An RNA of 177 nucleotides, treated with 2A3 and DMS and read out base by base. The data come from the RNA Mapping Database (RMDB), library TTRDEL. Values are in units of 0.01, from 0 to 300, in steps of 10. Reactivities are given for positions 27 through 126. The reactions ran in a buffer of 150 mM KOAc, 10 mM MgCl2 and 150 mM bicine (pH 8.5), at 24 C. As a SHAPE reagent, 2A3 marks flexible, mostly unpaired nucleotides at the ribose 2'-OH.
RNA sequence: GGGAACGACUCGAGUAGAGUCGAAAAGAUAUGGAGGAUAUCCACGGCGAUGAAAGGAAUCGGAAACGAUUCCUGGAGCGUGGAGUAUCCUCCUAAGUCAAAACCCACAAUGUUCGCAUUGUGGGAAGCCUCAAUGUAUGUUCGCAUACAUUGAGGCAAAAGAAACAACAACAACAAC
Reactivity to 2A3 in 0.01 (KOAc 150mM, MgCl2 10mM, bicine 150mM(pH8.5), 24C), signal-to-noise 3, nucleotides 027 to 126: g030a020u060a020u170g000g010a000g000g020a010u000a000u000c010c010a000c050g260g160c040g300a300u060g000a020a030a000g010g000a010a000u010c000g000g010a050a040a020c000g000a000u000u000c000c000u010g000g010a000g020c010g000u030g000g010a020g020u010a000u000c000c000u000c000c000u000a010a000g000u000c030a000a030a050a100c000c010c000a000c000a010a010u010g030u050u070c290g030c170a010u000u000g000u000g000g010g030a000a010
Reactivity to DMS in 0.01 (KOAc 150mM, MgCl2 10mM, bicine 150mM(pH8.5), 24C), signal-to-noise 3, nucleotides 027 to 126: g000a020u000a300u010g000g000a000g010g010a000u000a030u000c000c010a010c030g050g050c010g000a090u010g000a170a130a010g030g000a010a000u000c000g000g010a100a100a160c010g000a010u000u000c000c000u000g010g000a040g010c000g000u000g000g010a040g010u000a000u000c010c000u000c000c000u000a000a050g000u000c020a080a080a090a100c000c000c000a000c000a000a000u000g010u000u000c300g000c000a010u000u000g000u000g010g000g000a010a030